An RNA of 177 nucleotides, treated with 2A3 and DMS and read out base by base. The 2A3 profile rests on 5,452 reads. In probing experiments dimethyl sulfate is read out at A N1 and C N3, which are open when not base-paired. Values cover nucleotides 27 to 126.
RNA sequence: GGGAACGACUCGAGUAGAGUCGAAAAGAUAUGGAGAAUCAGGCUGACGAAGUCACUCGUAUCGGAAACGAUACGAGGUGAUCGAAGCCCUGAUUCUCCUAAGUCAAACGUACCCUUCGGGGUACGACAGUGUGACACUGUUCGCAGUGUCACACUGAAAAGAAACAACAACAACAAC
Reactivity to 2A3 in 0.01 (KOAc 150mM, MgCl2 10mM, bicine 150mM(pH8.5), 24C), signal-to-noise 2, nucleotides 027 to 126: g030a010u050a000u140g000g000a000g000a010a000u010c000a010g000g030c070u110g090a280c140g180a300a050g140u030c010a000c000u010c010g000u000a000u000c000g020g020a050a060a030c010g000a000u020a000c000g030a030g020g040u090g030a010u080c080g040a050a000g020c010c000c000u000g000a000u000u010c000u000c000c010u000a010a000g000u000c040a020a030a100c010g000u000a000c010c000c000u000u010c300g050g000g020g000u010a000c000g010a080
Reactivity to DMS in 0.01 (KOAc 150mM, MgCl2 10mM, bicine 150mM(pH8.5), 24C), signal-to-noise 3, nucleotides 027 to 126: g010a040u000a300u000g000g000a030g010a020a010u000c000a020g000g020c060u000g010a240c110g040a190a100g000u000c010a040c000u010c010g000u000a020u000c000g030g000a150a090a220c010g020a010u000a000c000g010a010g020g010u000g000a010u000c010g010a250a190g010c120c030c000u000g010a010u010u000c000u010c000c000u010a000a080g020u010c040a110a090a300c020g000u000a000c000c000c000u000u030c200g000g000g000g000u000a000c020g000a140